[RMDB]
RNA sequence: GGGAACGACUCGAGUAGAGUCGAAAACCAAGAAGCAGUUAGGACUGCUCCAACCUACUGACAAUUCUACAACUGUUAGUGUUACUGUAUCCAGUAACAUGGUUGAAACUGUUGUGGGUCAACUUGAGGAUACCAAAUGGUUCGCCAUUUGGUAUCCAAAAGAAACAACAACAACAAC
Reactivity to 2A3 in 0.01 (KOAc 150mM, MgCl2 10mM, bicine 150mM(pH8.5), 24C), signal-to-noise 1, nucleotides 027 to 126: c000c000a030a010g090a050a000g000c030a000g000u010u160a040g090g110a070c020u020g020c020u010c010c000a020a020c030c000u060a070c070u090g040a030c030a070a150u190u000c040u030a010c010a020a000c010u030g030u050u020a030g000u020g010u020u000a000c000u000g030u120a120u110c230c000a000g000u000a000a000c000a000u000g000g100u140u150g000a030a000a000c050u020g010u010u000g030u030g020g030g000u040c030a120a090c040u030u030g010a010
Reactivity to DMS in 0.01 (KOAc 150mM, MgCl2 10mM, bicine 150mM(pH8.5), 24C), signal-to-noise 1, nucleotides 027 to 126: c010c000a080a060g010a090a100g020c010a010g000u010u000a140g010g010a300c000u000g010c010u010c070c080a080a150c030c020u010a090c230u000g000a000c010a180a110u010u010c080u010a060c030a000a010c000u000g000u000u000a050g010u000g010u010u000a000c000u000g000u000a120u040c220c030a000g010u000a020a000c000a010u010g020g010u030u000g000a100a140a040c040u000g000u010u000g020u010g000g000g040u000c130a030a130c100u000u000g010a300